This 207-nucleotide RNA was probed chemically with 2A3.
Source: RMDB library OK3TST, as collected in RNAgym.
For 2A3, 330 sequencing reads were counted.
The reactions ran in a buffer of 150 mM KOAc, 10 mM MgCl2 and 150 mM bicine (pH 8.5), at 24 C.
RNA sequence: GGGAACGACUCGAGUAGAGUCGAAAAUGUGCUUUGUGUGUUCAUAAAACCUUUCCUCUACUGUGUGAGAAAGCAGUUAGCAAACAGCCACUUAAUAUAGUCAUAUGAUGAAUACUACUAGUUAAUUUCACAAAAUAGCUGAUAGACAAAGAAACCACGGUAAUGGCUAGUUCGCUAGCCAUUACCGAAAAGAAACAACAACAACAAC
Reactivity to 2A3 in 0.01 (KOAc 150mM, MgCl2 10mM, bicine 150mM(pH8.5), 24C), signal-to-noise 1, nucleotides 027 to 156: u020g000u000g020c040u000u030u100g060u010g020u010g000u000u060c070a100u120a090a100a060a080c000c010u000u010u080c010c030u120c010u020a040c000u050g140u120g030u060g170a110g060a120a150a000g020c050a000g000u040u000a030g000c200a140a000a000c060a080g000c070c000a080c030u070u060a160a000u140a000u040a190g060u020c010a040u060a110u090g030a040u020g060a010a030u020a100c000u000a030c000u020a040g020u040u040a140a170u100u150u100c040a020c070a030a080a010a130u060a020g030c010u040g040a060u070a020g130a080c010a030a060a000g070a020a020a000c010c070a010